[RMDB]
RNA sequence: GGGAACGACUCGAGUAGAGUCGAAAAGAUAUGGACCGGGUCAUAAAUGGAUGCCACUGAGGCUCGUCGGAAACGACGAGCUACCCACCAGUGGAACUACAUCCCUUUAUGACCCGGUCCUAAGUCAGUAUCCAUCCUUGUUCGCAAGGAUGGAUACAAAAGAAACAACAACAACAAC
Reactivity to DMS in 0.01 (KOAc 150mM, MgCl2 10mM, bicine 150mM(pH8.5), 24C), signal-to-noise 1, nucleotides 027 to 126: g010a050u000a300u000g010g010a010c000c000g000g020g000u000c000a000u020a000a010a010u030g000g000a000u000g020c000c000a010c010u000g000a040g020g000c000u000c000g060u000c000g020g000a220a090a300c000g000a000c000g000a020g010c000u000a000c050c000c100a300c150c000a000g000u000g000g000a060a070c090u000a300c010a010u000c000c000c120u000u030u000a000u000g010a000c020c000c000g010g000u000c010c000u000a000a080g010u000c060a120
Annotation: An RNA of 177 nucleotides, treated with DMS and read out base by base. The reactions ran in a buffer of 150 mM KOAc, 10 mM MgCl2 and 150 mM bicine (pH 8.5), at 24 C.